[RMDB]
The record gives the reactivity of an RNA of 207 nucleotides to 2A3. Conditions: 150 mM KOAc, 10 mM MgCl2 and 150 mM bicine (pH 8.5), 24 C. For 2A3, 625 sequencing reads were counted. For 2A3 the reverse transcriptase was SuperScript II with manganese. It was measured as part of the RMDB library OK3TST. Reactivities are given for positions 27 through 156.
RNA sequence: GGGAACGACUCGAGUAGAGUCGAAAACAGGAGGGCUGUCUGCAGGCAGAUGCGAUGGAGCCCAGCUCCUGUCACGUCUGCUGCCACCGACCUGGGCGUCCCACCCCUCCUGGGAGGAAGGAAGCCUCUCUUCCAUCUUGAGAGACCUGCCAGGCAGAGUUAGGCUCUCUUUCGAGAGAGCCUAACUAAAAGAAACAACAACAACAAC
Reactivity to 2A3 in 0.01 (KOAc 150mM, MgCl2 10mM, bicine 150mM(pH8.5), 24C), signal-to-noise 1, nucleotides 027 to 156: c040a000g000g000a030g020g040g050c120u090g000u240c110u110g010c020a030g100g010c000a000g020a050u040g020c030g050a090u160g020g030a020g060c290c300c050a020g010c000u010c000c010u060g030u070c000a010c020g000u000c000u000g000c000u000g020c040c000a040c000c030g220a270c000c000u020g020g000g020c000g060u000c000c000c000a020c010c000c000c000u000c000c000u000g020g000g040a030g080g010a100a070g070g020a000a050g000c000c000u010c020u010c000u000u130c070c090a180u080c160u210u160g000a000g000a000g020a090c060c000u030g060c030c020a030g030g000c100a060g010